Source: RMDB library OK1LIB, as collected in RNAgym. The record gives the reactivity of an RNA of 177 nucleotides to DMS and 2A3. Reactivities are rounded to 0.1 and cut off at 0 and 3.
[RMDB]
RNA sequence: GGGAACGACUCGAGUAGAGUCGAAAAGCUCUGAGAGACAGAUCGAACAACAAGGAGAGAUCGAAAAUCUUAGGGGAGAGAACGAAUCUGUCGUCUUCUCUAGGACAUUGUCGAUCAGAUGUCCAAAGACCAUUCAAUCGUUCGCGAUUGAAUGGUCAAAAGAAACAACAACAACAAC
Reactivity to DMS in 0.01 (KOAc 150mM, MgCl2 10mM, bicine 150mM(pH8.5), 24C), signal-to-noise 1, nucleotides 027 to 126: g000c010u000c000u000g000a000g000a220g000a000c150a060g000a020u000c000g000a130a180c060a010a160c250a300a160g000g080a050g040a300g050a000u020c020g030a090a010a110a100u000c000u000u010a010g000g000g000g020a020g000a120g000a000a000c040g000a110a020u010c110u000g000u000c000g000u100c000u000u040c000u000c000u000a020g070g010a030c060a020u060u010g000u000c010g000a220u000c000a000g050a070u020g000u000c010c020a110a100a120
Reactivity to 2A3 in 0.01 (KOAc 150mM, MgCl2 10mM, bicine 150mM(pH8.5), 24C), signal-to-noise 3, nucleotides 027 to 126: g020c010u000c000u020g010a000g000a010g000a010c010a000g010a010u040c050g010a030a040c040a050a000c040a070a090g040g030a110g060a000g000a040u000c000g070a070a020a020a010u020c000u000u000a000g000g000g010g000a010g010a000g020a080a000c030g040a100a090u110c110u230g090u060c070g150u020c000u000u000c000u000c000u000a000g010g010a000c000a110u090u110g010u010c000g000a010u000c000a000g050a060u100g070u000c000c000a040a060a000